[RMDB]
RNA sequence: GGGAACGACUCGAGUAGAGUCGAAAAGAGUAAUGGGCGCUCAAGGUGAGAUGAAGCUGUAGUCUCACUGGAAGGACUAGAGGUUAGAGGAGACACGCCCAAAACAAGCAACAGCUUCAUCAAGAGAAUUAGUAAAUGACUUCGGUCAUUUACUAAUAAAAGAAACAACAACAACAAC
Reactivity to 2A3 in 0.01 (KOAc 150mM, MgCl2 10mM, bicine 150mM(pH8.5), 24C), signal-to-noise 7, nucleotides 027 to 126: g020a010g030u090a090a090u050g010g000g000c010g020c020u020c070a110a120g190g040u150g120a150g000a030u010g000a010a000g000c000u000g010u060a030g000u010c000u000c020a120c040u020g040g060a040a050g100g030a040c090u120a090g030a050g200g090u170u090a030g020a040g100g040a000g000a000c020a010c040g010c000c000c000a020a040a010a020c030a020a010g120c010a010a020c000a000g000c000u010u020c000a030u020c020a040a010g070a010g030a130
Reactivity to DMS in 0.01 (KOAc 150mM, MgCl2 10mM, bicine 150mM(pH8.5), 24C), signal-to-noise 7, nucleotides 027 to 126: g000a020g010u010a070a100u010g010g010g010c010g010c030u010c020a110a170g000g020u030g000a220g000a010u000g000a040a020g010c000u000g000u000a120g000u000c000u000c010a080c050u020g010g010a090a080g000g000a090c100u020a080g010a110g010g010u010u020a060g010a140g000g010a040g000a020c020a170c200g010c000c010c020a010a040a090a070c190a090a140g000c170a130a030c010a000g010c010u000u000c010a010u000c020a120a120g000a120g010a080